[RMDB]
RNA sequence: GGGAACGACUCGAGUAGAGUCGAAAAGGUUGAUGAUUAGUCCCGCACCGCGUGAGGCAGGAAACUGAGCAGCGAAAAGGGGCAGCUGCGGACGGCACAAGGAUCGCAUGCUUGAGGGAGUGGCAUGGUAGAUUUAAAAGUUCGCUUUUAAAUCUACAAAAGAAACAACAACAACAAC
Reactivity to 2A3 in 0.01 (KOAc 150mM, MgCl2 10mM, bicine 150mM(pH8.5), 24C), signal-to-noise 1, nucleotides 027 to 126: g060g000u070u070g030a080u010g020a040u130u170a020g030u000c000c010c010g000c020a060c020c020g020c020g080u050g040a070g010g000c020a020g000g070a060a030a010c010u020g010a040g020c020a000g000c020g060a030a030a040a010g040g020g000g000c020a010g030c000u020g010c010g060g040a040c070g000g030c060a020c030a120a030g050g010a050u050c020g020c060a030u080g000c040u040u080g030a050g050g060g020a070g040u060g020g000c000a010u030g070
Reactivity to DMS in 0.01 (KOAc 150mM, MgCl2 10mM, bicine 150mM(pH8.5), 24C), signal-to-noise 3, nucleotides 027 to 126: g000g010u000u000g000a070u000g010a110u000u010a100g000u000c010c010c020g010c080a120c070c040g000c070g010u000g010a150g010g000c020a040g000g000a060a060a120c060u010g010a100g020c020a110g000c030g000a020a030a120a160g000g000g000g020c070a100g010c070u000g010c060g010g010a090c080g000g000c070a050c110a090a100g010g010a050u000c060g010c040a050u000g000c020u010u010g010a080g010g010g010a070g020u010g000g020c060a020u000g020
Structure probing data (2A3 and DMS) for a 177-nucleotide construct. It was measured as part of the RMDB library RFMREP. For DMS the reverse transcriptase was MarathonRT.